This 177-nucleotide RNA was probed chemically with DMS and 2A3. High 2A3 reactivity points to a flexible backbone, as in loops and unpaired stretches. The reactions ran in a buffer of 150 mM KOAc, 10 mM MgCl2 and 150 mM bicine (pH 8.5), at 24 C. 2A3 adducts were read by reverse transcription with SuperScript II with manganese.

RNA sequence: GGGAACGACUCGAGUAGAGUCGAAAAAGGCAGGCACUGCAGAUGUCACCAAAUUCCGUUACAUGUCUUACGACCACGACCAUGUCAUCAAGGAAGACAGUAUGAAGAAAAUAGCUAUUAGUACAUCCGCUGCAUGUAGUUUCGACUACAUGCAGCGAAAAGAAACAACAACAACAAC
Reactivity to DMS in 0.01 (KOAc 150mM, MgCl2 10mM, bicine 150mM(pH8.5), 24C), signal-to-noise 2, nucleotides 027 to 126: a100g000g050c020a050g020g020c070a040c070u000g020c070a110g000a170u000g000u010c030a150c070c110a050a090a180u000u000c000c050g020u010u000a040c060a050u000g020u000c000u000u000a090c100g000a080c100c150a040c060g030a040c050c100a050u010g010u000c010a130u000c040a060a140g010g000a040a060g000a080c010a030g000u000a010u000g000a050a110g000a100a050a070a030u000a020g000c060u000a030u010u010a050g000u000a060c140a140u010c100
Reactivity to 2A3 in 0.01 (KOAc 150mM, MgCl2 10mM, bicine 150mM(pH8.5), 24C), signal-to-noise 2, nucleotides 027 to 126: a000g000g050c000a000g000g010c010a010c080u060g000c040a020g050a150u050g010u030c040a040c050c010a000a110a110u140u010c030c000g030u030u060a010c000a140u060g020u010c000u060u050a020c030g040a020c060c000a050c070g000a010c000c110a160u080g060u100c000a030u010c050a020a060g090g000a000a050g040a030c000a000g060u130a130u100g080a040a060g100a100a050a040a040u140a030g000c030u020a060u190u060a090g060u070a020c020a050u050c020